Chemical mapping of a 177-nucleotide RNA with DMS and 2A3.
Conditions: 150 mM KOAc, 10 mM MgCl2 and 150 mM bicine (pH 8.5), 24 C.
RNA sequence: GGGAACGACUCGAGUAGAGUCGAAAACGACAGUUCGUGCGCGGCGACCUGAAGUUGCUUCGGCUUCUUCUUGUUCGCGUCCUGAGUGGAACUGCUCCUUCUUCACACCAGCCGGAGUAGGAAACUAGGUUUAAAUACAGUUCGCUGUAUUUAAACCAAAAGAAACAACAACAACAAC
Reactivity to DMS in 0.01 (KOAc 150mM, MgCl2 10mM, bicine 150mM(pH8.5), 24C), signal-to-noise 2, nucleotides 027 to 126: c070g020a130c070a030g000u010u000c030g030u000g000c070g020c050g000g010c030g000a040c020c020u000g000a010a020g020u000u000g030c020u010u010c130g040g030c000u000u010c000u010u000c010u000u000g000u000u000c000g000c010g030u020c030c030u000g010a030g030u010g010g000a070a070c010u000g000c050u000c000c010u010u000c020u000u000c020a130c080a210c100c090a090g020c070c050g000g010a010g010u000a020g010g020a120a070a080c120u000a080
Reactivity to 2A3 in 0.01 (KOAc 150mM, MgCl2 10mM, bicine 150mM(pH8.5), 24C), signal-to-noise 3, nucleotides 027 to 126: c030g090a020c020a030g040u050u020c030g070u120g080c030g000c020g050g040c030g010a060c000c000u020g000a010a010g010u000u020g030c000u030u040c280g160g000c010u020u010c010u020u000c000u000u070g080u110u100c030g000c020g030u050c010c050u070g070a050g040u080g000g060a040a030c000u000g000c010u020c000c000u000u060c000u060u070c080a110c030a030c110c060a020g080c050c060g030g000a020g040u040a030g040g000a060a080a030c090u090a090
Reactivities are rounded to 0.1 and cut off at 0 and 3. High DMS reactivity at an A or C suggests that its Watson-Crick edge is free. For DMS, 2,368 sequencing reads were counted. For 2A3 the reverse transcriptase was SuperScript II with manganese. Reactivities are given for positions 27 through 126.